[RMDB]
RNA sequence: GGGAACGACUCGAGUAGAGUCGAAAACACUGUGUCUAUGAGGGCUGGGUCACAGGGAGCAGGGCUGUGAGAAGCACUUGACGUUGAAGGGAAAGAGACAGUCAUCUGUCUACUUGGUGUCCCCCUACCGUCGUAACAGCUUCGGCUGUUACGACGGAAAAGAAACAACAACAACAAC
Reactivity to 2A3 in 0.01 (KOAc 150mM, MgCl2 10mM, bicine 150mM(pH8.5), 24C), signal-to-noise 1, nucleotides 027 to 126: c040a010c000u040g000u000g010u040c050u190a130u190g040a150g020g040g000c170u150g060g050g000u020c050a040c030a080g110g020g050a030g000c040a010g030g010g040c010u050g040u060g000a090g000a060a000g000c060a080c050u040u150g060a050c090g080u090u100g160a100a010g000g010g060a000a120a060g060a020g000a010c000a000g080u090c050a170u020c010u030g090u080c000u050a210c010u150u070g010g030u020g060u110c000c020c020c010c000u020a060
Reactivity to DMS in 0.01 (KOAc 150mM, MgCl2 10mM, bicine 150mM(pH8.5), 24C), signal-to-noise 1, nucleotides 027 to 126: c050a160c040u000g010u000g020u000c030u010a180u010g040a100g010g000g000c100u000g000g000g000u000c080a060c080a050g010g040g020a180g010c080a030g010g010g020c040u020g030u000g120a090g080a040a050g010c090a080c030u000u010g000a100c030g000u000u010g000a100a000g000g000g070a070a010a100g020a060g010a000c000a040g030u040c300a170u020c010u020g000u000c000u010a090c050u000u010g000g020u010g000u040c020c030c020c040c030u000a100